RNA sequence: GGGAACGACUCGAGUAGAGUCGAAAAGAUAUGGAGCCCACCGCAAGGUGCAUGUCGGAAACGACAUGGCACUGAUGACCGGUGGCUCCUAAGUCAAAAGCAGCACAAAGUUCGCUUUGUGCUGCAACACACAGUAGUAGUUCGCUACUACUGUGUGAAAAGAAACAACAACAACAAC
Reactivity to DMS in 0.01 (KOAc 150mM, MgCl2 10mM, bicine 150mM(pH8.5), 24C), signal-to-noise 9, nucleotides 027 to 126: g000a010u000a010u010g000g000a010g010c140c050c190a030c010c000g020c020a040a030g020g030u000g000c000a000u000g000u000c000g010g000a000a000a030c000g010a010c000a000u000g020g020c000a010c000u000g010a060u020g000a040c300c010g000g010u000g000g010c000u000c000c000u000a000a050g000u000c010a120a090a170a170g020c010a010g010c000a010c000a010a010a010g010u000u020c300g010c000u000u000u000g020u000g010c000u000g010c010a020a060
Reactivity to 2A3 in 0.01 (KOAc 150mM, MgCl2 10mM, bicine 150mM(pH8.5), 24C), signal-to-noise 5, nucleotides 027 to 126: g010a000u010a010u060g000g000a000g030c020c050c020a020c000c010g000c050a060a070g000g000u010g010c000a000u000g010u000c000g010g000a020a000a000c000g010a010c010a000u030g130g060c010a000c000u020g080a190u030g010a010c010c000g000g010u000g000g000c000u000c000c000u000a000a000g010u000c010a000a040a100a190g000c000a000g000c000a000c000a010a010a010g020u100u170c270g070c210u000u010u010g000u000g000c010u000g000c000a000a000